[RMDB]
RNA sequence: GGGAACGACUCGAGUAGAGUCGAAAAGGUCCAAGCCCGAAGCUUGCAUUCGAGAGCGAUCAGAUCGUCGCGCACAUGCCUUAGCGAUUACGUCAUUGUAACUAGGUUUUCUCGCAGAACCCAAGCAAAUUGAUCAAGUAUUCGUACUUGAUCAAUUAAAAGAAACAACAACAACAAC
Reactivity to 2A3 in 0.01 (KOAc 150mM, MgCl2 10mM, bicine 150mM(pH8.5), 24C), signal-to-noise 9, nucleotides 027 to 126: g080g000u030c040c010a030a020g030c020c020c030g040a040a010g020c040u080u100g020c050a100u070u120c050g040a040g010a020g130c020g020a050u080c040a040g050a120u070c040g030u020c020g010c000g010c020a020c020a120u120g010c010c000u050u070a020g020c020g110a090u040u090a040c050g040u040c070a090u030u170g040u070a050a070c040u020a050g040g000u020u020u070u030c040u000c020g000c010a020g030a090a070c010c000c010a030a020g060c050a040
Reactivity to DMS in 0.01 (KOAc 150mM, MgCl2 10mM, bicine 150mM(pH8.5), 24C), signal-to-noise 9, nucleotides 027 to 126: g010g000u020c040c050a090a110g010c030c020c040g000a080a110g010c040u000u020g010c100a090u000u010c050g010a100g010a100g000c020g000a070u010c100a100g010a160u010c070g010u010c050g000c030g000c090a070c110a070u010g000c020c040u010u010a090g010c090g000a090u010u010a040c050g000u010c120a060u030u030g020u000a050a060c070u000a080g000g010u010u010u010u000c030u000c040g000c070a070g000a090a090c020c020c010a090a080g010c140a050